[RMDB]
RNA sequence: GGGAACGACUCGAGUAGAGUCGAAAAGAUAUGGAUCCAUGGGACGCAACAGCUGCUUGUCGGAAACGACAAGGCAGACAUGCGUUUAUGGAUCCUAAGUCAAAACUUACGGCUUCGGCCGUAAGAACUAUUCUAUCGACUUCGGUCGAUAGAAUAGAAAAGAAACAACAACAACAAC
Reactivity to DMS in 0.01 (KOAc 150mM, MgCl2 10mM, bicine 150mM(pH8.5), 24C), signal-to-noise 3, nucleotides 027 to 126: g010a020u000a160u000g010g000a000u000c000c000a020u000g010g020g020a020c010g020c010a140a100c210a200g000c010u000g020c000u000u000g000u000c000g020g020a030a030a070c000g020a010c000a010a040g030g030c010a010g000a010c080a280u010g010c010g030u000u000u010a010u000g010g010a000u000c000c000u000a000a020g010u000c030a100a080a140a180c010u000u000a000c000g010g000c000u000u010c240g030g010c000c000g010u000a010a000g010a100a240
Reactivity to 2A3 in 0.01 (KOAc 150mM, MgCl2 10mM, bicine 150mM(pH8.5), 24C), signal-to-noise 4, nucleotides 027 to 126: g010a000u020a010u050g010g010a010u020c010c000a010u040g140g030g120a020c010g020c040a300a300c140a300g010c000u000g000c010u020u000g000u000c000g010g000a020a000a010c010g010a010c000a020a030g230g000c000a000g010a000c040a160u300g000c000g000u000u010u020a000u000g000g000a000u000c000c000u000a000a000g010u000c000a010a020a120a220c000u010u000a000c000g010g010c020u080u160c300g200g000c000c000g000u000a000a000g010a010a010
This 177-nucleotide RNA was probed chemically with DMS and 2A3. For 2A3 the reverse transcriptase was SuperScript II with manganese. The reactions ran in a buffer of 150 mM KOAc, 10 mM MgCl2 and 150 mM bicine (pH 8.5), at 24 C. The data come from the RNA Mapping Database (RMDB), library TTRDES. For DMS the reverse transcriptase was MarathonRT. Reactivities are given for positions 27 through 126.